[RMDB]
RNA sequence: GGGAACGACUCGAGUAGAGUCGAAAACUUGGCUUUCGAGCCAAGAAAAAAGGGGUCAUCGUUGAAACGCUCAGAGCUUUGAUCCUGAAGCCUCCACGGGGGAGCUCGAGCGUGGAGAUGACGGAGGCACCCAAAAAGAAUAGCUUCGGCUAUUCAACACAAUACAUUCGUUCGCGAAUGUAUUGUGAAAAGAAACAACAACAACAAC
Reactivity to 2A3 in 0.01 (KOAc 150mM, MgCl2 10mM, bicine 150mM(pH8.5), 24C), signal-to-noise 2, nucleotides 027 to 156: c000u000u000g000g000c010u020u090u150c230g040a020g010c000c010a010a000g020a060a020a000a000a000a000g050g000g000g000u010c020a020u020c000g100u120u030g030a030a040a020c000g020c000u030c150a130g110a120g010c030u300u300u130g050a080u100c000c000u010g060a110a050g050c020c070u030c040c030a020c030g000g000g010g030g000a010g000c020u000c010g010a040g000c000g000u000g000g000a030g000a000u030g000a000c030g000g020a020g000g010c050a070c000c000c010a080a050a010a000a050g000a000a000u020a000g000c020u050u040c300g130g010c000u010a000u000u000c000a030a000
Reactivity to DMS in 0.01 (KOAc 150mM, MgCl2 10mM, bicine 150mM(pH8.5), 24C), signal-to-noise 1, nucleotides 027 to 156: c010u010u010g030g010c010u000u000u000c130g030a030g010c020c010a030a020g000a000a020a060a150a060a240g000g000g030g020u000c000a060u020c020g030u020u010g000a300a180a020c000g010c000u000c010a170g030a020g000c010u000u000u010g030a130u000c000c030u010g010a120a110g000c020c030u010c040c020a280c010g030g020g030g030g000a020g000c040u000c000g020a100g030c030g050u000g010g000a300g000a050u000g010a020c060g020g060a030g030g000c080a130c030c000c010a020a080a070a130a140g010a020a040u000a020g000c010u000u000c300g080g040c000u000a020u010u000c010a080a300